This 177-nucleotide RNA was probed chemically with 2A3 and DMS. For 2A3, 2,361 sequencing reads were counted.

[RMDB]
RNA sequence: GGGAACGACUCGAGUAGAGUCGAAAAGACAAAUGCAGCAUAUUAGGCUAAGCACGAAAGGGACGGUAGCUCCUGGUGUCAGUUCAUACGGUGUGAUGCAUCUGCGUCGUGCACACAUGCACCCAAAGAUCUCGUGUACUUUCGAGUACACGAGAUCAAAAGAAACAACAACAACAAC
Reactivity to 2A3 in 0.01 (KOAc 150mM, MgCl2 10mM, bicine 150mM(pH8.5), 24C), signal-to-noise 2, nucleotides 027 to 126: g030a010c020a000a120a000u070g000c000a010g030c020a060u050a060u120u100a100g060g000c020u050a060a060g030c020a010c090g130a200a040a040g010g030g030a000c040g070g000u080a040g020c030u030c060c000u030g000g040u020g020u050c040a030g000u050u160c020a020u070a110c100g070g000u010g020u020g030a090u010g010c000a020u010c020u100g040c040g050u100c030g000u030g050c020a020c010a000c000a080u080g010c020a040c020c010c000a030a040a030
Reactivity to DMS in 0.01 (KOAc 150mM, MgCl2 10mM, bicine 150mM(pH8.5), 24C), signal-to-noise 2, nucleotides 027 to 126: g030a060c060a060a110a050u020g010c000a050g020c000a020u000a080u000u000a110g010g010c030u020a110a150g010c020a010c060g020a070a090a070g020g010g010a040c000g020g040u000a080g020c070u020c010c010u000g000g030u000g010u000c050a010g030u000u020c070a050u000a120c130g000g030u000g000u000g020a090u000g000c010a020u000c060u010g020c130g010u010c070g040u020g020c010a030c170a040c150a030u000g000c060a040c000c010c030a060a090a130
Record summary:
The RNA was probed in 150 mM KOAc, 10 mM MgCl2 and 150 mM bicine (pH 8.5) at 24 C. The DMS profile rests on 1,789 reads. The data come from the RNA Mapping Database (RMDB), library M2PK90. Values cover nucleotides 27 to 126.